[RMDB]
RNA sequence: GGGAACGACUCGAGUAGAGUCGAAAAGGAGGAAAAGAAACUAACAAGGAUUCCGUCAGUAACGGCGAGUGAAGACGGAGUAGCCCAAGGUUCAAUCCUGGAUCUCUUCGAGGUCAGGAGAUUUAACUGUGAUAGGUAGCUUCGGCUACCUAUCACAAAAAGAAACAACAACAACAAC
Reactivity to DMS in 0.01 (KOAc 150mM, MgCl2 10mM, bicine 150mM(pH8.5), 24C), signal-to-noise 2, nucleotides 027 to 126: g000g000a150g020g020a060a060a020a130g000a090a080a050c000u030a030a170c250a100a140g000g000a030u010u000c000c000g010u000c070a060g000u030a290a020c000g000g010c210g000a300g000u000g000a070a070g000a020c020g000g000a020g010u030a120g000c030c000c050a200a060g000g020u000u000c180a100a160u030c020c000u000g000g010a020u000c000u000c000u040u020c280g000a040g050g020u000c000a010g000g010a080g010a060u000u010u000a190a050c100
Reactivity to 2A3 in 0.01 (KOAc 150mM, MgCl2 10mM, bicine 150mM(pH8.5), 24C), signal-to-noise 1, nucleotides 027 to 126: g070g040a020g000g040a000a050a050a000g040a050a030a000c010u030a010a020c070a120a040g060g000a010u120u000c000c000g030u050c000a020g050u080a000a000c000g150g060c170g120a100g000u010g000a030a020g050a000c000g000g000a020g000u010a010g040c000c000c000a020a070g010g000u000u000c030a020a000u010c020c000u040g100g070a000u010c000u000c000u130u140c170g000a000g000g000u010c000a000g040g060a070g030a070u030u030u140a010a000c020